[RMDB]
Structure probing data (2A3 and DMS) for a 177-nucleotide construct. The RNA was probed in 150 mM KOAc, 10 mM MgCl2 and 150 mM bicine (pH 8.5) at 24 C. For 2A3 the reverse transcriptase was SuperScript II with manganese. The data come from the RNA Mapping Database (RMDB), library OK1LIB. For DMS, 1,436 sequencing reads were counted.
RNA sequence: GGGAACGACUCGAGUAGAGUCGAAAAACUACUGCAGAGGUUUAUCUAAUGUUUCAUGAAUAUUGGGCAAAUGUCAUAUCUUCUGACAUCUUAAAUAAUGACUUGAAAGCAGAAGAUUAUAUCUCAGCACUUAGAUCACCUUCGGGUGAUCUAAGUGAAAAGAAACAACAACAACAAC
Reactivity to 2A3 in 0.01 (KOAc 150mM, MgCl2 10mM, bicine 150mM(pH8.5), 24C), signal-to-noise 4, nucleotides 027 to 126: a000c030u140a020c040u100g110c080a040g010a040g060g040u020u060u030a010u000c020u030a090a030u030g020u000u020u010c030a030u030g170a260a040u090a040u070u030g000g030g040c060a020a070a120u010g010u000c000a040u060a120u190c150u300u030c040u070g010a010c000a010u040c040u040u050a150a030a020u130a070a130u140g060a050c030u050u020g020a050a040a000g120c030a000g000a060a010g000a060u060u060a100u080a010u040c000u000c010a020g010
Reactivity to DMS in 0.01 (KOAc 150mM, MgCl2 10mM, bicine 150mM(pH8.5), 24C), signal-to-noise 1, nucleotides 027 to 126: a120c010u040a090c170u070g010c090a210g070a010g000g040u090u000u000a010u000c000u020a180a140u020g010u020u000u070c010a050u010g000a150a050u010a010u000u000g000g000g050c300a170a080a000u000g000u010c020a020u050a110u020c130u000u000c020u020g000a040c030a000u000c070u000u000a070a080a080u040a030a080u000g000a160c040u000u000g000a000a040a050g000c010a010g050a210a020g000a000u000u020a000u000a050u000c010u000c020a050g020